RNA sequence: GGGAACGACUCGAGUAGAGUCGAAAACACAGGGCAGAACUUUCUCAUGAAGGCAGCUGAAGGAACUCACAAGUUUCUUCCAGCAGGGAGGACAGAGGGAAGGAGAAGUGUCUUCCCGGCACUGCUGGGGGUGUAAUGAUUUCGAUCAUUACACCCCAAAAGAAACAACAACAACAAC
Reactivity to 2A3 in 0.01 (KOAc 150mM, MgCl2 10mM, bicine 150mM(pH8.5), 24C), signal-to-noise 2, nucleotides 027 to 126: c020a010c040a040g060g010g020c000a010g000a090a040c040u020u060u010c020u050c070a100u140g080a070a030g040g030c040a020g000c060u050g020a010a000g000g000a010a030c000u030c000a100c030a140a090g010u010u000u000c010u000u040c010c010a010g020c000a000g030g040g020a050g000g050a000c030a060g110a140g120g080g040a050a070g100g090a050g020a140a040g100u030g030u070c020u010u010c030c000c010g000g010c020a000c020u050g040c020u040g030
Reactivity to DMS in 0.01 (KOAc 150mM, MgCl2 10mM, bicine 150mM(pH8.5), 24C), signal-to-noise 2, nucleotides 027 to 126: c130a090c080a120g020g000g010c020a020g000a110a120c090u000u000u010c050u010c060a150u000g000a160a080g030g020c120a090g030c100u000g000a070a000g000g000a020a010c030u010c300a070c300a110a100g010u000u000u000c000u000u000c070c060a050g040c020a090g000g030g000a070g000g010a050c080a040g000a050g010g010g000a040a080g000g020a080g010a060a070g020u010g000u010c070u000u010c000c010c020g000g030c100a160c040u000g000c080u000g000